The record gives the reactivity of an RNA of 177 nucleotides to 2A3 and DMS. The reactions ran in a buffer of 150 mM KOAc, 10 mM MgCl2 and 150 mM bicine (pH 8.5), at 24 C. For 2A3, 37,562 sequencing reads were counted. DMS adducts were read by reverse transcription with MarathonRT.
RNA sequence: GGGAACGACUCGAGUAGAGUCGAAAAGACUGCGUGCACUUGAGACGAUAUCGAGCCGGAAAUUAAUCGAUAAUGUCUCGUGUAGUGGAUACGAUCCGGCAAGUAUCGACUACGUGUGCUCGUAGGAGCAGUAUAUCCAGUUCGCUGGAUAUACUGCAAAAGAAACAACAACAACAAC
Reactivity to 2A3 in 0.01 (KOAc 150mM, MgCl2 10mM, bicine 150mM(pH8.5), 24C), signal-to-noise 9, nucleotides 027 to 126: g080a020c000u000g000c000g010u010g000c000a000c020u070u100g000a000g000a000c020g030a040u010a010u060c010g000a010g010c010c010g010g120a080a130a060u300u260a090a170u130c010g000a000u020a050a090u130g020u010c000u000c020g080u150g010u060a010g010u020g130g000a000u000a010c000g010a030u010c000c000g000g000c040a070a020g000u000a000u010c020g060a000c000u030a030c010g070u060g000u000g010c000u000c000g000u000a000g000g010a020
Reactivity to DMS in 0.01 (KOAc 150mM, MgCl2 10mM, bicine 150mM(pH8.5), 24C), signal-to-noise 3, nucleotides 027 to 126: g020a150c000u000g000c000g000u010g000c020a010c000u090u080g010a020g000a020c010g020a100u010a000u000c010g000a060g010c000c000g000g000a120a140a120u030u050a090a080u000c010g010a010u010a000a070u020g010u000c000u000c000g020u040g020u010a000g010u000g000g010a030u000a000c010g000a100u000c000c010g020g000c020a100a150g020u000a000u000c010g000a030c010u000a000c020g010u030g000u000g010c000u000c000g010u010a000g000g000a120